[RMDB]
RNA sequence: GGGAACGACUCGAGUAGAGUCGAAAAGCACGUCGUUACGACGACGUGCAAGAAAACAAAAGGAGUGGCGAUCCCUGGCCACAGUGAAUCAAACAGGGGAAAAGCAUGGUGGUACGCCACCAUGCAAGGCGUAGGGAUGAUUCGUCAUCCCUACGCCAAAAGAAACAACAACAACAAC
Reactivity to 2A3 in 0.01 (KOAc 150mM, MgCl2 10mM, bicine 150mM(pH8.5), 24C), signal-to-noise 1, nucleotides 027 to 126: g030c030a040c040g000u030c000g000u000u020a100c300g000a000c000g030a000c000g090u000g000c000a000a000g000a010a090a000a000c150a000a180a000a000g210g150a270g030u020g000g000c020g020a120u110c000c000c000u000g000g000c040c000a010c000a000g000u000g060a010a040u110c040a000a010a040c000a020g010g000g000g040a070a090a000a000g010c000a000u000g010g000u030g000g000u020a040c130g090c050c030a000c020c000a000u000g010c000a000a000
Structure probing data (2A3) for a 177-nucleotide construct. It was measured as part of the RMDB library OK1LIB. The RNA was probed in 150 mM KOAc, 10 mM MgCl2 and 150 mM bicine (pH 8.5) at 24 C. Reactivities are rounded to 0.1 and cut off at 0 and 3. 2A3 adducts were read by reverse transcription with SuperScript II with manganese. Values cover nucleotides 27 to 126.